[RMDB]
RNA sequence: GGGAACGACUCGAGUAGAGUCGAAAACACUGUGACGGAACCAACGAUUGUCACGAUGGUUCUGACGAGGUCGGAUGCGUGCAGCCAACCGUCGUCGAUCCACCACAAACCAACCUUCAAGUGCCAACUGGUAUACCGUGUUCGCACGGUAUACCAGAAAAGAAACAACAACAACAAC
Reactivity to 2A3 in 0.01 (KOAc 150mM, MgCl2 10mM, bicine 150mM(pH8.5), 24C), signal-to-noise 2, nucleotides 027 to 126: c030a000c030u110g020u040g180a020c050g040g070a050a080c030c020a090a000c120g060a100u060u180g060u110c110a010c130g000a050u000g000g000u050u020c050u160g010a010c010g000a000g060g000u050c060g050g000a030u100g050c100g050u100g000c060a000g030c000c000a000a040c010c000g250u100c020g030u010c020g000a020u000c010c030a020c020c000a040c050a020a020a010c020c020a010a070c030c000u050u060c050a080a000g020u000g070c010c020a080a060
Reactivity to DMS in 0.01 (KOAc 150mM, MgCl2 10mM, bicine 150mM(pH8.5), 24C), signal-to-noise 2, nucleotides 027 to 126: c160a100c110u010g010u010g010a120c070g000g000a070a060c080c090a030a130c090g010a140u000u020g000u010c160a110c090g000a080u000g000g010u000u000c000u020g020a010c010g010a140g000g020u010c030g020g020a060u000g030c100g000u000g000c040a080g020c010c020a010a050c010c020g020u040c000g000u010c000g000a020u000c000c010a030c040c010a040c130a070a070a130c070c030a010a080c080c010u000u010c110a070a070g000u010g020c050c030a040a080